RNA sequence: GGGAACGACUCGAGUAGAGUCGAAAACAAACGAAAAGGUAAACACGGCACCUCACUAUGUCUGUAGACAUCCGCCCAUUCGUCAAGUCGGCCUUGCCGGAAUGAGAUCCUCAUUAGCUCUGUAGCACAUCUGUUUACCCUUCGGGGUAAACAGAUGAAAAGAAACAACAACAACAAC
Reactivity to DMS in 0.01 (KOAc 150mM, MgCl2 10mM, bicine 150mM(pH8.5), 24C), signal-to-noise 2, nucleotides 027 to 126: c050a080a090a130c120g010a050a040a060a090g010g000u000a060a090a100c100a100c040g000g000c050a080c050c030u000c060a050c070u000a100u010g000u000c030u020g010u000a100g020a100c070a040u010c060c020g030c020c000c020a110u000u010c020g000u000c040a080a020g020u000c040g010g000c100c040u000u000g000c020c060g000g020a050a020u000g000a090g000a100u000c040c020u000c040a060u000u000a080g000c040u000c060u000g000u000a050g040c100a180
Reactivity to 2A3 in 0.01 (KOAc 150mM, MgCl2 10mM, bicine 150mM(pH8.5), 24C), signal-to-noise 2, nucleotides 027 to 126: c000a030a110a030c070g170a090a020a000a060g060g010u090a060a050a050c080a030c070g030g020c020a020c020c020u040c000a030c020u100a010u130g040u040c070u100g110u040a030g020a030c010a030u010c040c030g050c030c010c000a040u070u090c040g080u030c050a000a080g040u040c010g130g000c000c020u020u090g060c020c060g060g070a050a030u070g040a040g000a110u050c000c030u050c060a080u050u020a010g000c000u010c030u130g100u040a030g040c030a020
The record gives the reactivity of an RNA of 177 nucleotides to DMS and 2A3.
The data come from the RNA Mapping Database (RMDB), library OK2TRN.
The RNA was probed in 150 mM KOAc, 10 mM MgCl2 and 150 mM bicine (pH 8.5) at 24 C.
Reactivities are rounded to 0.1 and cut off at 0 and 3.